[RMDB]
RNA sequence: GGGAACGACUCGAGUAGAGUCGAAAACGGUUACGCCUUCUAUACCGUUAUCAAGGAAGGUACUCGGCCAUGCUAAGGGAAGCAUUAUUCCUUAGGCGCAUGUCGCCGCCAGCAUGGUGUGAGGGGAAAAAGUAUGCUGGGUUCGCCCAGCAUACAAUCACAACCAUACGUUCGCGUAUGGUUGUGAAAAAGAAACAACAACAACAAC
Reactivity to 2A3 in 0.01 (KOAc 150mM, MgCl2 10mM, bicine 150mM(pH8.5), 24C), signal-to-noise 3, nucleotides 027 to 156: c000g000g010u020u020a040c040g020c000c000u010u000c000u030a060u050a100c010c000g220u110u070a070u080c060a050a010g070g000a000a000g000g010u060a080c010u000c000g040g000c020c000a000u000g000c000u080a090a080g000g000g000a010a010g030c050a130u100u080a140u080u180c000c000u080u160a080g000g000c000g000c030a120u180g140u300c030g010c030c000g040c050c040a000g000c000a000u000g000g000u080g100u140g000a040g040g020g010g020a030a070a040a050a010g010u000a000u000g000c010u000g050g000g000u050u070c190g070c030c000c000a000g000c000a000u000a000c000a000a000
Reactivity to DMS in 0.01 (KOAc 150mM, MgCl2 10mM, bicine 150mM(pH8.5), 24C), signal-to-noise 2, nucleotides 027 to 156: c000g010g000u000u010a230c050g010c010c000u010u020c010u000a090u030a070c030c020g080u000u020a080u020c300a050a180g000g030a080a030g010g020u000a100c010u000c010g030g010c040c000a020u000g020c000u020a150a190g010g000g010a010a050g060c270a100u010u010a140u000u010c000c030u000u010a110g010g010c010g020c040a170u010g020u030c040g040c010c020g050c090c080a030g010c020a030u000g010g030u000g000u000g000a080g000g030g050g000a040a050a120a100a220g000u010a010u000g010c000u000g010g010g000u010u010c300g050c000c000c000a010g000c010a020u000a010c010a020a090
The record gives the reactivity of an RNA of 207 nucleotides to 2A3 and DMS.
The DMS profile rests on 2,701 reads.
For 2A3, 2,306 sequencing reads were counted.
Values cover nucleotides 27 to 156.
Source: RMDB library M2RFPK, as collected in RNAgym.
High 2A3 reactivity points to a flexible backbone, as in loops and unpaired stretches.